This 207-nucleotide RNA was probed chemically with DMS and 2A3.

RNA sequence: GGGAACGACUCGAGUAGAGUCGAAAAUUUGCAGGUGAUGAAACCAACAUUACAGACACAGGUGAAGGUGGUUAUUAUGGUGGAUAUUACUACAGACGUUUCGAGUUUGGACAAUUUGGUACGGUUUGGCUUUCUUGUUGGAAUAAAGAUGAUUUGGGAUAACAUUUCUUUUCGAAGAAAUGUUAUCAAAAGAAACAACAACAACAAC
Reactivity to DMS in 0.01 (KOAc 150mM, MgCl2 10mM, bicine 150mM(pH8.5), 24C), signal-to-noise 2, nucleotides 027 to 156: u000u000u000g020c060a050g010g010u000g020a090u020g010a110a090a140c060c020a050a140c040a070u000u010a120c030a170g030a090c040a050c050a070g020g030u010g020a060a100g020g040u000g030g030u000u000a050u000u000a050u000g010g000u000g020g010a110u000a090u010u000a080c030u010a100c060a110g000a080c140g020u020u010u020c050g010a150g000u000u000u010g020g030a050c060a050a100u010u010u010g040g030u000a070c060g020g020u000u000u000g030g020c040u000u000u020c030u000u000g030u000u000g010g000a070a130u000a050a060a090g000a110u000g000a240u000u000u000g020g040
Reactivity to 2A3 in 0.01 (KOAc 150mM, MgCl2 10mM, bicine 150mM(pH8.5), 24C), signal-to-noise 4, nucleotides 027 to 156: u110u090u100g050c040a010g030g000u040g040a060u030g030a070a030a040c030c010a020a030c030a080u100u130a030c030a070g120a040c030a010c020a080g030g050u020g040a060a030g030g030u040g010g030u010u030a060u090u030a060u070g020g020u020g000g020a020u030a020u180u070a030c020u020a020c040a080g180a070c070g010u040u050u080c060g040a040g000u020u100u060g030g000a020c040a090a100u030u050u070g000g010u010a010c010g000g000u010u010u020g030g000c010u060u080u020c020u060u070g020u000u000g020g050a050a040u100a110a120a050g070a030u100g010a040u050u030u120g080g010
Description:
For DMS, 4,493 sequencing reads were counted. For DMS the reverse transcriptase was MarathonRT. For 2A3 the reverse transcriptase was SuperScript II with manganese.